[RMDB]
RNA sequence: GGGAACGACUCGAGUAGAGUCGAAAAUUGGCUUCGACGCUGGUGAUGAAGCUCAUAGAUGCAUGCCGAGAGCGCAUUUUCUCUCGUAAAUAAAAUUUGCAUUUUAAUAGUCGCAAACGACGAAACUUACGCUCUAGCUGCCUAAGGGCAGUUUGUCCGCAAUUGGUACGUUCGCGUACCAAUUGCGAAAAGAAACAACAACAACAAC
Reactivity to 2A3 in 0.01 (KOAc 150mM, MgCl2 10mM, bicine 150mM(pH8.5), 24C), signal-to-noise 2, nucleotides 027 to 156: u050u100g030g000c000u000u020c060g020a030c030g040c080u070g030g050u050g090a140u070g020a030a010g000c030u030c010a050u110a030g030a010u040g020c080a030u100g070c020c040g000a000g000a000g010c060g000c030a040u000u010u030u000c000u000c000u000c000g100u130a000a020a040u040a010a030a020a000u000u010u010g000c000a000u020u050u040u130a240a270u080a180g000u010c030g000c060a090a090a220c130g040a010c000g040a010a000a010c050u040u080a040c030g010c020u000c000u030a000g000c000u000g010c000c000u010a060a160g020g000g030c000a010g020u000u000u080g040u000c040
This 207-nucleotide RNA was probed chemically with 2A3. The RNA was probed in 150 mM KOAc, 10 mM MgCl2 and 150 mM bicine (pH 8.5) at 24 C. For 2A3 the reverse transcriptase was SuperScript II with manganese.